[RMDB]
RNA sequence: GGGAACGACUCGAGUAGAGUCGAAAAGGAACCAACAUCAGCCAUUAGGCCUAGGAAGGCCAAGAUCCUGGGAUGGCAUCCCAAGGCUCCUACUUUCCUCCUCACAUCGUAGCCUCAACUCAUGACCCUAUAACCAGGAGUUCGCUCCUGGUUAUAGAAAAGAAACAACAACAACAAC
Reactivity to DMS in 0.01 (KOAc 150mM, MgCl2 10mM, bicine 150mM(pH8.5), 24C), signal-to-noise 4, nucleotides 027 to 126: g010g010a100a120c020c030a150a070c180a090u010c090a080g010c020c030a090u010u010a120g010g010c020c030u000a130g010g020a140a090g000g010c020c040a090a090g000a070u010c030c050u000g010g000g000a040u000g020g010c020a300u000c010c020c010a040a140g000g010c040u000c030c010u000a080c110u000u000u010c010c000u000c030c020u000c030a050c080a060u000c070g010u000a100g020c010c020u000c060a050a030c060u010c050a120u000g010a130c080c070
Reactivity to 2A3 in 0.01 (KOAc 150mM, MgCl2 10mM, bicine 150mM(pH8.5), 24C), signal-to-noise 2, nucleotides 027 to 126: g030g010a010a040c030c000a010a040c030a080u090c030a010g000c040c010a060u100u160a070g020g030c010c000u030a060g140g160a210a060g060g000c010c020a010a020g050a040u070c040c050u010g000g020g000a000u030g050g040c070a190u020c000c000c010a010a030g000g020c010u030c020c000u030a110c050u080u090u050c000c000u000c000c000u040c010a040c010a060u040c030g040u060a010g010c000c000u070c020a020a040c020u020c040a100u110g040a100c030c020